[RMDB]
RNA sequence: GGGAACGACUCGAGUAGAGUCGAAAACUCGCGAUCCCAUUGAGGCGUGGGGAGCGACAUGAAUCAGCCUCGAUUAGAUGUGGUCGACCGUACAGCGGCGUACAGCGACCUAGUUAGAAGCCGCAAAACCGGAAGAGAUGACGCUCGACGGACGUCAGAUGCAUAAUAAUUUCGAUUAUUAUGCAUCAAAAGAAACAACAACAACAAC
Reactivity to DMS in 0.01 (KOAc 150mM, MgCl2 10mM, bicine 150mM(pH8.5), 24C), signal-to-noise 4, nucleotides 027 to 156: c050u010c020g030c060g000a180u010c010c020c000a150u000u000g010a040g040g030c050g020u000g010g000g030g020a110g020c020g030a200c070a110u010g020a140a110u000c080a140g010c010c000u000c020g000a180u020u000a090g010a120u000g020u000g010g010u000c000g040a120c020c010g010u000a050c060a110g030c030g020g020c090g020u000a080c020a120g020c010g030a040c010c010u000a090g000u000u000a100g010a070a100g040c020c010g020c030a070a040a080a140c070c030g000g010a070a080g000a150g010a150u000g010a060c000g020c010u000c010g010a120c030g010g010a050c020g020u000c020a090
Reactivity to 2A3 in 0.01 (KOAc 150mM, MgCl2 10mM, bicine 150mM(pH8.5), 24C), signal-to-noise 8, nucleotides 027 to 156: c010u010c010g000c010g040a180u120c010c000c000a000u020u130g010a000g000g020c010g000u010g000g010g000g000a040g010c010g040a050c070a150u300g120a130a100u140c070a080g000c000c000u000c010g000a090u120u160a080g100a150u130g120u080g070g010u010c010g010a210c030c030g010u020a020c040a030g010c010g010g000c000g010u010a010c010a020g010c000g010a040c010c020u010a010g010u030u020a050g020a130a010g000c000c000g020c000a040a050a010a040c060c030g070g020a170a040g030a030g010a070u110g040a020c020g010c050u010c050g050a040c040g030g030a030c010g020u020c010a010

This 207-nucleotide RNA was probed chemically with DMS and 2A3. The reactions ran in a buffer of 150 mM KOAc, 10 mM MgCl2 and 150 mM bicine (pH 8.5), at 24 C. The 2A3 profile rests on 9,801 reads. 2A3 adducts were read by reverse transcription with SuperScript II with manganese. Source: RMDB library OK3TST, as collected in RNAgym.